[RMDB]
Structure probing data (2A3) for a 207-nucleotide construct. The 2A3 profile rests on 1,029 reads. Values cover nucleotides 27 to 156.
RNA sequence: GGGAACGACUCGAGUAGAGUCGAAAACGACUUGCACGAGUGCGUGCAGGUCGAAGCGAGUGGUGACACUCGCAAGCACGUCAACUAUAAGCGCCCAUUAUAGUACAAACACAUAAAGCCCCGAUAUGUGUAGACGUGCAAGGGCGAACGGGGCAAACAUCCAGCUGAGUUUCGACUCAGCUGGAUGAAAAGAAACAACAACAACAAC
Reactivity to 2A3 in 0.01 (KOAc 150mM, MgCl2 10mM, bicine 150mM(pH8.5), 24C), signal-to-noise 2, nucleotides 027 to 156: c010g000a000c000u000u000g000c000a000c020g140a190g290u300g110c030g040u000g000c000a000g000g000u000c000g000a040a000g010c000g000a000g000u000g000g060u070g040a010c000a010c000u010c000g000c010a000a010g030c000a000c000g010u010c020a080a030c030u010a030u020a080a030g070c040g170c140c040c000a040u000u010a000u000a010g040u070a070c070a040a130a010c000a000c000a000u010a000a070a010g010c000c000c000c000g020a020u000a010u060g020u000g040u040a090g000a000c000g010u000g020c050a080a160g080g050g020c060g020a110a020c000g000g000g000g000c000a000a000a030